[RMDB]
RNA sequence: GGGAACGACUCGAGUAGAGUCGAAAAAGUGGACGAUACAUUACACCGAGCAAUUAAAUUACGGUCCACGCUCGGUCAUUAUUCUGGCGAGAGCCAGUUCACAGACAGCUAGCGAAAGGAAGGACCUAGCAGGAAGGAAGGAGCUAGCGCUAGGGCAAAUUACGUCGGAUUUCGAUCCGACGUAAUUAAAAGAAACAACAACAACAAC
Reactivity to 2A3 in 0.01 (KOAc 150mM, MgCl2 10mM, bicine 150mM(pH8.5), 24C), signal-to-noise 2, nucleotides 027 to 156: a010g020u030g000g010a000c030g060a110u050a230c060a090u180u110a080c040a020c040c000g000a000g000c000a040a130u100u090a290a060a120u120u120a180c080g070g000u000c000c000a010c010g000c000u000c000g000g000u010c010a060u040u280a050u050u060c010u080g010g000c010g030a020g020a010g010c000c000a000g010u050u090c120a080c000a020g070a030c010a020g030c020u070a000g010c040g070a020a050a030g040g060a020a010g030g010a010c000c000u000a000g000c010a010g070g020a040a000g040g020a030a010g010g030a030g000c010u000a000g000c000g010c060u040a010g000g090g000c010a050
Reactivity to DMS in 0.01 (KOAc 150mM, MgCl2 10mM, bicine 150mM(pH8.5), 24C), signal-to-noise 1, nucleotides 027 to 156: a100g020u010g030g000a100c010g000a170u000a100c100a120u020u010a100c180a180c060c090g000a160g050c030a130a150u000u000a000a120a190u010u000a120c110g020g030u000c010c010a050c050g090c010u000c060g040g000u000c140a000u000u000a130u060u000c040u000g020g010c070g030a290g000a240g070c000c000a010g060u000u000c100a060c040a210g000a080c050a070g040c030u010a010g010c030g030a010a060a070g000g000a040a040g030g040a090c010c020u020a020g000c020a130g050g070a110a080g000g000a100a090g010g010a080g000c100u000a000g000c000g000c020u000a000g090g010g000c030a070